RNA sequence: GGGAACGACUCGAGUAGAGUCGAAAAUUCACAGUUCCACGUGGCUGGGGAGUCCUCAGGAAACUUAAAAUCAUGGUAGAAGAGGAAGCAGGCAUGUCUUACAUGGUGGCAGGAGAAAGAGAAGAUGUGGAGGAGGAACUGUCAAACACUUAUAAAAGUGCUCAUUAGUAUUCGUACUAAUGAGCACAAAAGAAACAACAACAACAAC
Reactivity to 2A3 in 0.01 (KOAc 150mM, MgCl2 10mM, bicine 150mM(pH8.5), 24C), signal-to-noise 2, nucleotides 027 to 156: u060u070c060a060c020a040g010u020u000c020c000a050c070g030u040g010g030c070u030g000g000g040g000a020g050u060c000c010u040c020a020g070g080a060a040a050c050u110u080a050a050a070a220u060c040a080u070g130g000u080a010g030a150a020g010a040g020g010a050a010g020c020a010g050g000c000a030u060g050u030c050u080u130a080c030a040u030g010g030u030g060g000c040a000g000g050a040g070a010a040a000g090a000g010a050a050g020a010u020g010u050g060g000a010g000g020a060g010g010a000a010c010u000g000u010c020a000a090a000c060a050c050u160u150a120u170a190a130a070a030
Reactivity to DMS in 0.01 (KOAc 150mM, MgCl2 10mM, bicine 150mM(pH8.5), 24C), signal-to-noise 1, nucleotides 027 to 156: u000u040c060a040c070a050g030u010u000c020c010a240c120g010u010g010g040c050u010g000g000g020g010a060g000u010c050c000u020c040a120g010g000a060a120a080c160u000u000a060a000a080a120u000c020a060u000g010g010u000a130g040a050a080g050a120g000g000a100a050g040c040a040g020g060c050a060u020g020u010c040u000u010a070c060a060u000g010g010u000g010g070c020a040g020g010a090g020a050a030a070g020a120g000a060a100g010a060u000g020u010g020g010a110g030g050a040g000g040a040a060c010u000g010u010c050a020a040a060c060a040c040u000u020a020u000a030a030a070a300
Structure probing data (2A3 and DMS) for a 207-nucleotide construct. For DMS the reverse transcriptase was MarathonRT. 2A3 is a SHAPE reagent: it acylates the 2'-hydroxyl of flexible nucleotides of all four kinds. The RNA was probed in 150 mM KOAc, 10 mM MgCl2 and 150 mM bicine (pH 8.5) at 24 C. The 2A3 profile rests on 1,187 reads.